[RMDB]
RNA sequence: GGGAACGACUCGAGUAGAGUCGAAAAAUUUCAGCAGCGAAGAAGCGAAAGUGACGGUGGCUGCCGAAGAAGCGCCGACUAACUACGUGCUAGCAGCCACGGUAAUACGUAGGGCGCAAGCGCAUACAAAUAAAAUAAUAUUCGUAUUAUUUUAUUUAAAAGAAACAACAACAACAAC
Reactivity to DMS in 0.01 (KOAc 150mM, MgCl2 10mM, bicine 150mM(pH8.5), 24C), signal-to-noise 4, nucleotides 027 to 126: a110u010u020u010c030a090g020c060a070g020c030g010a160a090g020a120a140g000c030g000a030a080a070g000u000g000a120c060g010g040u000g010g000c000u000g010c000c100g010a050a080g010a080a060g010c010g020c000c000g000a080c160u070a090a300c050u000a020c030g000u010g000c080u020a140g000c010a010g000c000c010a020c010g010g010u020a040a040u040a020c030g010u000a030g000g010g000c010g020c030a070a100g000c120g010c120a090u030a120c050
Reactivity to 2A3 in 0.01 (KOAc 150mM, MgCl2 10mM, bicine 150mM(pH8.5), 24C), signal-to-noise 2, nucleotides 027 to 126: a000u050u080u020c010a020g030c000a010g000c010g070a110a030g080a160a040g090c020g050a050a120a010g130u140g060a050c130g000g020u020g030g000c010u000g000c030c030g030a110a080g030a020a040g010c010g000c010c010g090a100c030u040a120a010c000u020a080c010g020u030g040c040u100a020g000c000a010g000c010c010a000c000g020g040u140a070a030u110a040c040g000u050a020g030g000g010c000g000c030a030a020g040c030g000c010a040u050a220c010
An RNA of 177 nucleotides, treated with DMS and 2A3 and read out base by base. Values cover nucleotides 27 to 126. DMS adducts were read by reverse transcription with MarathonRT. For 2A3, 1,176 sequencing reads were counted.